[RMDB]
This 177-nucleotide RNA was probed chemically with DMS and 2A3. The DMS profile rests on 19,366 reads.
RNA sequence: GGGAACGACUCGAGUAGAGUCGAAAAGAUAUGGAGCUAUGGAGAGCCAUUCGGAAACGAAUGAAGCUCGUUGAAAUAGAACUACUCCUAAGUCAAAGAUCGAUAUCACUUCGGUGAUAUCGAUCAAGUUGUAACAUUAGUUCGCUAAUGUUACAACAAAAGAAACAACAACAACAAC
Reactivity to DMS in 0.01 (KOAc 150mM, MgCl2 10mM, bicine 150mM(pH8.5), 24C), signal-to-noise 9, nucleotides 027 to 126: g000a020u000a050u000g000g000a010g020c030u000a010u000g010g000a030g000a010g010c010c000a010u000u000c010g020g000a010a010a040c000g000a010a000u000g000a180a180g010c000u000c000g010u000u010g000a110a120a020u000a010g000a130a120c170u010a300c010u000c000c000u000a010a140g000u000c010a100a120a110g000a010u000c000g000a010u000a000u000c000a000c000u000u010c190g020g010u000g000a010u000a000u000c000g010a000u000c000a010a060
Reactivity to 2A3 in 0.01 (KOAc 150mM, MgCl2 10mM, bicine 150mM(pH8.5), 24C), signal-to-noise 6, nucleotides 027 to 126: g000a000u010a000u050g000g000a000g000c010u000a000u020g010g000a040g000a000g030c010c000a010u000u000c000g010g000a030a010a000c010g000a010a000u030g030a110a040g010c000u000c010g020u070u020g000a000a010a000u020a010g080a180a060c110u120a070c010u130c000c000u000a010a000g010u000c040a150a080a100g010a000u000c000g000a000u000a000u000c000a000c010u050u080c300g090g000u000g000a000u000a000u010c000g000a000u000c010a000a010
The 2A3 profile rests on 33,307 reads. Values cover nucleotides 27 to 126. For 2A3 the reverse transcriptase was SuperScript II with manganese.